[RMDB]
RNA sequence: GGGAACGACUCGAGUAGAGUCGAAAACUUCGGUAGUUCGCUACCGAAGAAAAGAGAGACUACGCAACUGUCAAAAACACAACAAAAGUGUAAAAGCGUAGAAAAGUUCCCACUUCGGUGGGAACAACAUUCAAGAAUCGUUCGCGAUUCUUGAAUGAAAAGAAACAACAACAACAAC
Reactivity to 2A3 in 0.01 (KOAc 150mM, MgCl2 10mM, bicine 150mM(pH8.5), 24C), signal-to-noise 2, nucleotides 027 to 126: c000u000u000c000g000g050u000a010g030u040u050c190g020c060u000a000c000c010g000a000a000g000a000a020a020a010g090a010g000a010g010a030c000u000a020c020g000c000a090a090c080u020g050u080c030a030a000a000a100a000c070a030c030a230a070c060a120a180a050a090g020u050g000u020a050a130a000a020g000c000g020u000a000g050a000a000a000a020g010u010u000c030c000c010a000c000u020u010c220g060g000u010g000g030g000a000a000c010a000a000
Reactivity to DMS in 0.01 (KOAc 150mM, MgCl2 10mM, bicine 150mM(pH8.5), 24C), signal-to-noise 2, nucleotides 027 to 126: c010u000u000c000g010g000u000a000g030u000u010c260g040c010u000a000c000c000g020a000a000g000a040a040a080a100g000a080g000a120g020a170c020u000a030c010g030c000a150a070c070u000g010u010c080a100a050a100a100a030c000a000c010a070a100c210a070a110a120a170g000u000g020u000a020a020a170a130g000c010g010u010a000g000a060a060a060a150g000u000u000c010c000c010a010c030u000u010c140g010g000u000g020g000g010a000a010c000a060a100